[RMDB]
RNA sequence: GGGAACGACUCGAGUAGAGUCGAAAAUUUUUAAUGGCCAAGGAUGGAAUAACCAAACUGGCUGAUGUUGAAGCGGACGUCGCAGCACGUGCUGAUGACGAAGGCUUCAUCACAUUAAAGAACAAUCAAGCCAAAAUCUUCGGAUUUUGGAAAAGAAACAACAACAACAAC
Reactivity to 2A3 in 0.01 (KOAc 150mM, MgCl2 10mM, bicine 150mM(pH8.5), 24C), signal-to-noise 7, nucleotides 027 to 129: u020u020u010u000u070a030a030u060g030g000c000c030a080a060g030g010a020u030g010g070a140a150u150a220a120c010c000a020a000a030c020u000g000g000c060u060g070a070u140g000u000u030g000a000a000g000c000g040g120a010c000g000u000c000g000c000a000g000c020a040c250g200u290g000c010u020g010a300u110g000a010c010g000a170a060g030g000c000u000u000c000a000u000c000a000c000a000u020u030a060a050a000g050a060a030c020a060a100u150c030a070a010g050
Reactivity to DMS in 0.01 (KOAc 150mM, MgCl2 10mM, bicine 150mM(pH8.5), 24C), signal-to-noise 5, nucleotides 027 to 129: u050u040u000u000u020a000a000u000g010g040c000c020a040a110g030g000a210u050g010g040a180a150u150a020a010c020c050a030a050a200c030u030g020g020c030u040g040a030u070g020u000u030g030a000a000g000c010g050g020a300c030g050u030c020g020c040a030g000c040a240c190g090u040g040c040u040g010a090u030g030a080c010g060a040a270g050g070c060u040u010c000a000u000c000a140c160a020u000u000a040a010a030g030a060a030c110a100a070u100c130a000a000g040